[RMDB]
RNA sequence: GGGAACGACUCGAGUAGAGUCGAAAACUGUAUCAUGUCCUAUCUUCCACUGCGCAUCUAAGUGUGCACUUUUGCUACCUCACUAAUGUGGCUGAAUUGGAGUGCAUCCUCACAGCCAAGGUGGGAAGUCGUGAAGCAGGUUCGCCUGCUUCACGACAAAAGAAACAACAACAACAAC
Reactivity to 2A3 in 0.01 (KOAc 150mM, MgCl2 10mM, bicine 150mM(pH8.5), 24C), signal-to-noise 2, nucleotides 027 to 126: c050u050g040u170a120u100c010a030u100g020u060c000c020u020a080u010c000u140u000c020c010a030c040u030g000c050g030c040a060u000c050u170a100a120g030u030g010u010g070c000a010c040u100u050u190u130g010c030u040a060c010c000u110c050a080c000u030a150a170u300g030u020g100g090c010u010g050a190a160u110u140g030g000a030g020u130g070c000a070u030c010c010u020c020a000c010a030g000c030c020a000a000g020g000u020g020g010g040a050a030
Conditions: 150 mM KOAc, 10 mM MgCl2 and 150 mM bicine (pH 8.5), 24 C. The record gives the reactivity of an RNA of 177 nucleotides to 2A3. For 2A3, 910 sequencing reads were counted. It was measured as part of the RMDB library OK2TST.